The record gives the reactivity of an RNA of 177 nucleotides to DMS and 2A3. It was measured as part of the RMDB library M2PK50. High 2A3 reactivity points to a flexible backbone, as in loops and unpaired stretches. 2A3 adducts were read by reverse transcription with SuperScript II with manganese.
RNA sequence: GGGAACGACUCGAGUAGAGUCGAAAAGCUUUCCGUUUCGACGGAAAGCAAAGGCAAGUACAUGAGAGAUCAAAGAUCACUCAGAAAAGCCGUAGUAAAGAAAAAUCAAUCUGUUCGCAGAUUGAAAAGUUAAUCGUAGAUUCGUCUACGAUUAACUAAAAGAAACAACAACAACAAC
Reactivity to DMS in 0.01 (KOAc 150mM, MgCl2 10mM, bicine 150mM(pH8.5), 24C), signal-to-noise 6, nucleotides 027 to 126: g000c000u000u000u000c000c000g010u000u000u010c170g030a020c000g010g000a010a010a010g020c010a000a040a080g010g010c000a020a060g010u000a090c060a080u000g010a010g010a060g010a020u000c020a160a140a180g010a050u000c000a060c000u000c000a050g000a030a120a210a250g000c010c000g020u010a080g020u010a080a070a130g000a010a080a080a110a120u000c010a010a000u000c000u000g010u000u010c170g020c000a010g000a020u000u000g000a010a040a070
Reactivity to 2A3 in 0.01 (KOAc 150mM, MgCl2 10mM, bicine 150mM(pH8.5), 24C), signal-to-noise 4, nucleotides 027 to 126: g000c000u010u000u000c000c000g000u020u030u090c190g130a010c000g010g000a000a000a000g000c000a030a030a010g000g000c020a040a050g080u040a070c090a230u110g000a000g000a000g000a010u010c070a300a180a020g000a010u010c000a040c040u000c010a010g030a010a060a010a010g000c020c030g020u050a040g040u040a010a170a090g050a070a120a020a000a020u020c000a000a000u000c010u010g030u030u050c230g000c100a000g010a010u000u050g010a050a060a010